[RMDB]
RNA sequence: GGGAACGACUCGAGUAGAGUCGAAAACGAUAUGCAUUGAUCGCUUACUCUAUUAAUGCGUAUUAGUAUGCUCGUAUGAGAUUAGCUAUUGUCAUGAAAAUGACAAUAGGGUAAGCGACGAGCAUAAGGUAGUUGUUGAUUUCGAUCGACAACUACCAAAAGAAACAACAACAACAAC
Reactivity to 2A3 in 0.01 (KOAc 150mM, MgCl2 10mM, bicine 150mM(pH8.5), 24C), signal-to-noise 9, nucleotides 027 to 126: c030g020a040u020a000u050g100c140a160u000u040g100a220u080c020g010c060u070u070a050c030u040c010u060a020u040u060a080a050u110g050c030g040u060a040u060u030a050g080u020a050u130g050c000u000c020g090u150a150u300g070a090g020a110u070u080a030g010c000u010a000u020u050g010u000c000a000u020g070a070a080a060a020u010g000a000c000a000a000u000a000g000g010g010u010a010a010g110c000g000a000c000g000a000g000c000a000u010a030a030
Reactivity to DMS in 0.01 (KOAc 150mM, MgCl2 10mM, bicine 150mM(pH8.5), 24C), signal-to-noise 5, nucleotides 027 to 126: c070g010a120u000a000u000g000c010a080u020u000g000a070u000c030g020c130u010u020a060c090u010c020u000a020u010u010a040a070u020g000c080g040u020a040u020u010a080g030u020a050u010g000c000u000c020g010u010a070u040g000a040g000a100u010u010a090g000c030u000a040u010u000g010u000c000a000u000g000a070a060a110a010u000g010a020c010a010a010u000a000g000g000g010u000a010a020g020c020g000a010c010g010a030g000c020a010u000a010a080
About this RNA: This 177-nucleotide RNA was probed chemically with 2A3 and DMS. High DMS reactivity at an A or C suggests that its Watson-Crick edge is free. As a SHAPE reagent, 2A3 marks flexible, mostly unpaired nucleotides at the ribose 2'-OH. 2A3 adducts were read by reverse transcription with SuperScript II with manganese. For DMS the reverse transcriptase was MarathonRT.